About this RNA: Chemical mapping of a 207-nucleotide RNA with DMS and 2A3. The data come from the RNA Mapping Database (RMDB), library OK3TST. For DMS the reverse transcriptase was MarathonRT.

RNA sequence: GGGAACGACUCGAGUAGAGUCGAAAAAGCGUCUUCAGAGUCAUUGCAACGAUGAAGCAUCUGUGACAUUCAUCGGCAGUUAGACCAGGAGACUGGUCUAUGAGAGUCUGAGGAAGUCACAGAUGUUUCUCAGAAUCUCUCAGACUCUGAAGACGCACGUUGCAUGAUAGUUCGCUAUCAUGCAACGAAAAGAAACAACAACAACAAC
Reactivity to DMS in 0.01 (KOAc 150mM, MgCl2 10mM, bicine 150mM(pH8.5), 24C), signal-to-noise 1, nucleotides 027 to 156: a080g010c010g020u010c010u010u020c010a010g000a040g040u000c010a110u000u000g020c030a080a060c050g000a060u030g000a020a070g020c070a060u000c020u000g020u010g000a010c010a170u000u000c020a080u010c020g000g000c030a150g020u000u000a000g010a000c000c000a050g000g000a300g000a300c020u000g010g050u000c010u020a020u000g020a140g020a170g040u030c010u020g030a040g000g020a010a130g000u000c040a190c030a010g020a040u000g010u000u000u000c000u030c050a050g020a080a040u010c040u010c060u000c120a220g030a000c000u000c000u010g010a010a010g010a000c000g070c000a000
Reactivity to 2A3 in 0.01 (KOAc 150mM, MgCl2 10mM, bicine 150mM(pH8.5), 24C), signal-to-noise 6, nucleotides 027 to 156: a000g010c000g000u000c000u000u000c000a000g000a000g010u010c010a050u070u080g050c070a130a070c080g040a050u220g000a010a000g020c000a010u010c000u000g020u000g010a020c060a300u010u010c010a030u010c000g010g000c010a120g050u030u010a000g010a000c000c000a000g010g010a040g030a040c010u000g000g000u000c000u000a020u040g090a120g010a010g090u060c120u300g010a020g000g010a010a000g010u070c000a000c000a000g010a000u010g000u010u000u000c000u000c000a010g030a040a050u050c020u000c000u010c120a030g000a000c000u000c000u000g000a000a000g000a000c000g000c000a000
The RNA was probed in 150 mM KOAc, 10 mM MgCl2 and 150 mM bicine (pH 8.5) at 24 C.